[RMDB]
RNA sequence: GGGAACGACUCGAGUAGAGUCGAAAAAGUAUAAAUCAUACAAUUCUUGUAGUACAUCAUAUAUAGCACUGAAUUACCAAAUUCCUGAUAAAUAAGGAAAGGGUGGAAUAAAAGUAUCUCAUCAGGUCUAACUAAUUUUGUUCGCAAAAUUAGUUAGAAAAGAAACAACAACAACAAC
Reactivity to 2A3 in 0.01 (KOAc 150mM, MgCl2 10mM, bicine 150mM(pH8.5), 24C), signal-to-noise 2, nucleotides 027 to 126: a010g080u080a110u040a100a170a080u100c040a000u050a120c030a020a170u090u010c020u060u120g060u070a070g050u010a020c010a040u050c030a000u170a020u020a020u060a240g030c030a020c060u020g050a060a030u070u020a050c010c010a060a110a140u030u000c000c000u010g000a040u050a250a170a070u120a080a010g050g000a070a030a040g070g000g000u030g030g030a010a040u090a100a080a000a000g020u030a060u030c060u030c020a090u030c000a040g150g000u000
Reactivity to DMS in 0.01 (KOAc 150mM, MgCl2 10mM, bicine 150mM(pH8.5), 24C), signal-to-noise 2, nucleotides 027 to 126: a150g010u000a030u000a070a180a110u010c070a070u010a000c020a070a130u000u000c020u010u000g000u000a090g000u000a100c050a030u010c080a050u000a070u000a090u010a160g000c050a040c080u000g010a090a060u000u000a050c050c050a050a140a090u000u000c010c050u000g020a100u000a050a060a100u000a080a020g000g000a030a070a080g020g000g030u000g000g000a070a020u010a060a020a100a070g020u000a050u000c070u020c080a050u000c110a050g000g020u000